[RMDB]
RNA sequence: GGGAACGACUCGAGUAGAGUCGAAAAGAUCGGAAACAGCAGCAGGUGAGUCCGCCUUAUGUGAAGGAUCGGCUGAAACACGAGGGAAUACUGAGCCAACGCAAGACGGUAGCCGAACAGUAGCAACAAAACGCUUACGUGUUCGCACGUAAGCGAAUCUUCCUGUGUUGUUCGCAACACAGGAAGAAAAAGAAACAACAACAACAAC
Reactivity to 2A3 in 0.01 (KOAc 150mM, MgCl2 10mM, bicine 150mM(pH8.5), 24C), signal-to-noise 2, nucleotides 027 to 156: g010a040u070c010g030g020a070a110a020c020a000g020c020a000g010c000a020g020g040u020g060a040g010u000c030c020g060c000c020u140u110a110u100g110u020g060a030a020g060g030a050u050c060g030g000c020u090g020a040a100a090c130a020c050g020a040g000g000g010a030a050u050a130c040u010g020a010g070c000c010a030a000c030g060c060a110a000g040a040c030g010g050u060a020g000c010c000g030a020a000c030a040g080u080a020g000c030a010a030c020a060a100a060a000c010g000c000u000u000a000c010g000u010g010u060u060c170g000c050a000c010g000u000a000a000g000c000g000a000a010
Reactivity to DMS in 0.01 (KOAc 150mM, MgCl2 10mM, bicine 150mM(pH8.5), 24C), signal-to-noise 1, nucleotides 027 to 156: g010a110u000c020g020g010a070a040a110c060a160g000c030a050g040c090a010g050g000u000g000a180g060u020c000c010g040c030c000u030u000a140u000g000u000g020a100a150g030g000a060u000c030g030g050c010u020g000a140a130a040c050a030c050g040a130g060g000g030a030a090u010a070c120u030g030a080g010c000c010a070a150c040g050c030a050a060g010a150c000g060g030u000a160g020c100c020g030a000a090c090a120g000u000a090g000c020a040a090c090a040a040a040a270c020g030c000u010u000a000c000g020u020g000u010u000c300g030c040a040c000g020u000a000a030g020c010g000a010a010